Source: RMDB library TTRDEL, as collected in RNAgym.
Structure probing data (2A3 and DMS) for a 177-nucleotide construct.
The 2A3 profile rests on 3,963 reads.
RNA sequence: GGGAACGACUCGAGUAGAGUCGAAAAGAUAUGGAUCUAGAACCUCCUACGAGCUUUGAUCUCGGAAACGAGGGAGCUCGGUAGGAGUCCCUAGAUCCUAAGUCAAAGACGCACUUCGGUGCGUCAAGUUUAGAUUUCAGUUCGCUGAAAUCUAAACAAAAGAAACAACAACAACAAC
Reactivity to 2A3 in 0.01 (KOAc 150mM, MgCl2 10mM, bicine 150mM(pH8.5), 24C), signal-to-noise 2, nucleotides 027 to 126: g020a000u090a060u170g010g000a010u000c000u000a010g040a060a110c030c000u000c000c000u010a010c030g000a010g020c020u300u300u170g080a110u100c000u010c000g050g030a090a080a070c010g000a010g030g040g000a000g000c020u000c040g010g020u020a000g010g000a000g000u000c010c000c020u000a000g000a010u000c000c000u000a170a020g060u010c020a000a080a180g010a000c010g000c000a020c000u080u150c300g160g000u020g050c050g000u000c000a000a010
Reactivity to DMS in 0.01 (KOAc 150mM, MgCl2 10mM, bicine 150mM(pH8.5), 24C), signal-to-noise 3, nucleotides 027 to 126: g020a020u000a300u000g000g000a000u010c000u010a010g000a110a210c220c000u000c000c000u000a040c000g000a010g020c000u000u000u020g000a050u010c010u000c000g000g000a120a110a210c030g010a020g000g000g000a010g020c000u000c000g040g010u000a020g000g000a020g000u000c150c240c010u000a000g000a010u000c000c000u000a000a060g010u000c050a050a110a130g010a000c000g020c000a010c000u000u000c180g030g010u000g000c000g000u000c000a000a070

For DMS, 2,946 sequencing reads were counted.
Reactivities are given for positions 27 through 126.
For DMS the reverse transcriptase was MarathonRT.